The record gives the reactivity of an RNA of 177 nucleotides to DMS and 2A3. Source: RMDB library OK2TRN, as collected in RNAgym. Reactivities are rounded to 0.1 and cut off at 0 and 3. For 2A3, 5,067 sequencing reads were counted. For DMS, 4,682 sequencing reads were counted. High DMS reactivity at an A or C suggests that its Watson-Crick edge is free.

RNA sequence: GGGAACGACUCGAGUAGAGUCGAAAAGUCGCCGCGUCCACAUCAACGCCCAGCGCGGGCGAGGGAUGCGUCCUACGGGGGUGACCCAUUCGCCGGCAUGGGAGAGGACGGCAAGAUUGCCGCGACGAGUCCCAGUAUGAUUCGUCAUACUGGGACUAAAAGAAACAACAACAACAAC
Reactivity to DMS in 0.01 (KOAc 150mM, MgCl2 10mM, bicine 150mM(pH8.5), 24C), signal-to-noise 4, nucleotides 027 to 126: g000u000c020g020c010c230g010c030g020u000c000c040a140c140a160u020c100a090a140c160g010c000c010c000a050g020c130g040c020g000g030g010c000g010a020g000g000g000a050u000g010c030g000u010c010c010u010a090c150g020g000g030g010g000u010g000a080c000c000c000a120u000u000c010g020c010c000g000g040c020a060u000g010g010g000a070g010a100g010g000a030c020g010g000c080a070a110g000a110u010u010g030c000c100g010c010g010a020c050g000
Reactivity to 2A3 in 0.01 (KOAc 150mM, MgCl2 10mM, bicine 150mM(pH8.5), 24C), signal-to-noise 4, nucleotides 027 to 126: g020u000c000g000c030c040g060c010g030u030c000c000a090c010a210u110c060a070a110c080g030c010c000c010a040g030c300g040c130g210g000g000c000g000a010g050g020g010a030u110g170c030g130u070c000c000u050a150c200g140g020g010g000g000u020g030a030c000c000c010a130u080u050c010g000c010c000g150g000c000a040u030g010g000g020a100g020a040g030g020a010c000g010g000c010a010a010g110a150u130u300g020c010c030g000c030g000a020c010g000